[RMDB]
RNA sequence: GGGAACGACUCGAGUAGAGUCGAAAAUGAGGCCUCUCUAACAAUGAAAUUUGAUACCCUUCGCAGAGUUAUUUGCCGAAUCGUAAGAUGUCCAGAUUUUUCAUUUUUGGUGCAUCUGGAACCCUCGCAGAGCACUGAGGUUCGCCUCAGUGCUCUGAAAAGAAACAACAACAACAAC
Reactivity to DMS in 0.01 (KOAc 150mM, MgCl2 10mM, bicine 150mM(pH8.5), 24C), signal-to-noise 1, nucleotides 027 to 126: u050g000a260g000g010c000c040u000c000u000c000u060a060a150c110a060a040u000g000a050a070a160u000u020u000g000a060u000a060c040c040c040u000u000c000g000c110a000g000a050g000u030u050a060u010u030u030g040c040c040g000a020a140u030c070g000u000a130a060g020a030u000g020u040c000c000a010g000a010u000u000u010u010u070c230a100u000u020u020u000u000g000g010u020g010c020a000u000c040u000g000g050a080a070c020c020c020u000c110g010
Reactivity to 2A3 in 0.01 (KOAc 150mM, MgCl2 10mM, bicine 150mM(pH8.5), 24C), signal-to-noise 3, nucleotides 027 to 126: u150g050a110g020g010c000c000u000c010u020c010u040a070a040c030a100a100u140g050a080a030a130u100u110u110g080a070u130a120c030c000c000u060u050c030g000c070a010g000a000g070u100u170a150u130u180u170g010c020c020g060a020a050u050c000g020u050a040a020g010a020u030g000u020c000c030a010g060a150u040u040u050u080u090c160a260u030u010u060u080u030g040g070u280g000c000a010u000c030u000g000g030a020a020c020c000c040u040c020g070